[RMDB]
RNA sequence: GGGAACGACUCGAGUAGAGUCGAAAAUGUGACUGGUUCUUCAAUAGCCAGCUGAGGCAACUCACCUAUCUGGUUUCAGGUGAAGGCCAAGUUCAAGUCAUUCUCCGGGUGAAGGAAGGUAUGCCCCCUACCAGAGUGUUUUCGAACACUCUGGUAGAAAAGAAACAACAACAACAAC
Reactivity to 2A3 in 0.01 (KOAc 150mM, MgCl2 10mM, bicine 150mM(pH8.5), 24C), signal-to-noise 2, nucleotides 027 to 126: u150g030u030g030a010c000u000g010g000u190u280c010u040u020c020a080a090u070a050g020c040c000a020g030c070u050g050a040g010g000c090a100a090c090u040c050a030c030c030u060a030u030c020u050g010g030u030u110u160c070a060g160g020u020g030a010a000g040g000c000c020a060a030g010u040u080c050a030a010g020u010c010a050u070u000c040u030c030c020g030g040g080u070g070a070a030g070g010a040a050g070g000u050a060u140g000c000c000c010c000
Reactivity to DMS in 0.01 (KOAc 150mM, MgCl2 10mM, bicine 150mM(pH8.5), 24C), signal-to-noise 4, nucleotides 027 to 126: u000g020u000g010a040c020u010g010g030u000u010c020u010u000c050a060a050u010a090g010c000c000a030g010c190u000g020a050g010g010c130a090a140c200u010c100a090c110c070u010a090u010c020u000g000g000u000u000u010c190a060g030g010u000g010a020a020g000g010c000c010a040a070g020u010u000c090a050a100g000u010c040a090u000u000c030u000c020c090g010g010g020u000g000a100a090g010g010a060a070g000g010u000a050u010g000c020c010c010c080

An RNA of 177 nucleotides, treated with 2A3 and DMS and read out base by base. It was measured as part of the RMDB library OK2TST. The reactions ran in a buffer of 150 mM KOAc, 10 mM MgCl2 and 150 mM bicine (pH 8.5), at 24 C. For DMS the reverse transcriptase was MarathonRT.